[RMDB]
RNA sequence: GGGAACGACUCGAGUAGAGUCGAAAACAGGGUGGGUUCCCUGACCUCAGGCUAGAGGAGCAGCAGUGCUGAGCCUUUUCAGCUGUUGCCACCGAGCCAGCCAUGCAGGCUCGGGUCUGACAGCCGCCCCUUAUCAGAAGUUCGCUUCUGAUAAGGGAAAAGAAACAACAACAACAAC
Reactivity to 2A3 in 0.01 (KOAc 150mM, MgCl2 10mM, bicine 150mM(pH8.5), 24C), signal-to-noise 3, nucleotides 027 to 126: c040a010g020g010g040u140g070g250g040u190u230c000c000c000u020g070a060c010c000u080c140a080g020g000c000u040a010g010a040g080g010a030g000c000a000g000c010a030g050u110g280c080u010g020a050g080c050c090u170u130u150u060c000a010g000c000u000g000u030u010g000c000c020a070c010c000g000a000g000c010c000a000g020c030c060a210u300g040c050a050g000g000c000u000c000g020g010g030u020c030u040g020a020c010a000g000c000c000g020c000
Reactivity to DMS in 0.01 (KOAc 150mM, MgCl2 10mM, bicine 150mM(pH8.5), 24C), signal-to-noise 6, nucleotides 027 to 126: c040a030g010g000g020u000g020g010g020u010u000c010c010c010u010g000a180c040c020u010c170a070g010g010c020u000a030g000a300g000g010a190g010c020a010g010c030a040g010u010g010c050u000g000a020g020c230c130u000u010u010u000c030a120g000c000u000g010u000u000g000c010c180a120c010c000g010a030g010c010c000a040g040c020c190a130u010g020c050a070g010g010c000u000c010g000g000g000u010c020u000g010a230c180a040g010c000c030g010c180
Chemical mapping of a 177-nucleotide RNA with 2A3 and DMS. Conditions: 150 mM KOAc, 10 mM MgCl2 and 150 mM bicine (pH 8.5), 24 C. For DMS, 6,834 sequencing reads were counted. Reactivities are given for positions 27 through 126. For 2A3 the reverse transcriptase was SuperScript II with manganese.